[RMDB]
RNA sequence: GGGAACGACUCGAGUAGAGUCGAAAACGCACUCGCAGCUUAAUAACCUGCGCUGAGCCCUUCUCCCCAAGCUUGCCUGUGUCCUAGGGAAUUGGAAGGUCAUCCUUCACAGGAUCGUGUGGAAGUCAUUACUCGUGAGUGUUCGCACUCACGAGAACUUUUAAACUCAGUUCGCUGAGUUUAAAAGAAAAGAAACAACAACAACAAC
Reactivity to DMS in 0.01 (KOAc 150mM, MgCl2 10mM, bicine 150mM(pH8.5), 24C), signal-to-noise 3, nucleotides 027 to 156: c050g000c020a130c040u000c010g010c030a030g000c010u000u010a150a140u010a200a080c230c010u000g020c000g040c160u010g020a150g020c030c010c030u000u010c020u000c030c020c010c010a060a150g020c040u000u010g020c010c010u000g010u000g000u000c020c020u000a040g010g050g000a150a110u000u000g010g010a080a040g000g030u000c100a120u000c030c000u000u000c060a250c050a070g010g010a050u000c070g020u000g030u010g000g010a080a260g010u000c050a100u000u010a130c000u000c000g050u000g020a070g030u000g010u000u020c300g000c010a030c000u000c000a000c000g010a010g020a020a080
Reactivity to 2A3 in 0.01 (KOAc 150mM, MgCl2 10mM, bicine 150mM(pH8.5), 24C), signal-to-noise 4, nucleotides 027 to 156: c050g010c010a050c020u030c000g000c000a000g000c020u030u050a030a030u030a040a030c000c000u010g030c020g010c150u040g010a020g020c020c010c000u070u040c090u040c010c000c010c020a040a030g040c030u080u080g020c000c000u030g000u020g020u060c020c030u030a050g040g020g060a090a090u110u090g060g030a030a030g060g060u090c060a090u090c010c000u040u050c020a030c000a020g010g030a060u050c070g020u050g010u050g100g050a050a040g040u060c060a100u090u170a080c000u000c000g000u000g000a000g000u010g010u050u060c130g030c060a000c000u010c000a000c000g000a000g000a000a000
The record gives the reactivity of an RNA of 207 nucleotides to DMS and 2A3. For DMS, 5,719 sequencing reads were counted. The RNA was probed in 150 mM KOAc, 10 mM MgCl2 and 150 mM bicine (pH 8.5) at 24 C. DMS adducts were read by reverse transcription with MarathonRT. Values cover nucleotides 27 to 156.